RNA sequence: GGGAACGACUCGAGUAGAGUCGAAAAUUCGGAUUGCAGGCUGCAACUCGCCUGCAUGAAGCCGGAAUCGCUAGUAAUCGCAGGUCAGCUAUACUGCGGUGAAUGUGUUCCUGAGCCUUGUACACACUUACUGAUGCCAUUUCGAUGGCAUCAGUAAAAAAGAAACAACAACAACAAC
Reactivity to 2A3 in 0.01 (KOAc 150mM, MgCl2 10mM, bicine 150mM(pH8.5), 24C), signal-to-noise 3, nucleotides 027 to 126: u060u040c000g020g000a000u010u030g000c000a000g000g000c030u060g030c060a130a110c040u080c120g010c000c000u010g000c000a000u000g000a000a020g040c010c010g000g040a020a060u200c010g010c020u000a010g000u000a010a000u000c010g000c000a010g000g050u130c100a060g040c060u100a160u140a250c000u000g000c000g030g010u010g000a000a000u020g010u010g000u000u000c000c020u010g040a010g030c020c010u000u050g110u120a080c070a000c010a000c090
Reactivity to DMS in 0.01 (KOAc 150mM, MgCl2 10mM, bicine 150mM(pH8.5), 24C), signal-to-noise 3, nucleotides 027 to 126: u000u020c000g000g010a100u030u000g020c000a030g010g020c000u010g030c130a110a120c240u010c160g020c000c000u000g020c000a010u020g010a210a210g010c050c020g000g030a020a050u000c040g000c000u030a060g000u000a060a000u010c020g000c000a000g000g000u040c140a090g040c130u000a040u010a060c000u000g000c010g000g000u000g000a100a110u000g000u000g000u000u010c000c010u000g010a120g000c080c080u000u030g010u020a100c120a090c110a070c170

Annotation
This 177-nucleotide RNA was probed chemically with 2A3 and DMS. Source: RMDB libraries RFM100 and RFMREP, as collected in RNAgym.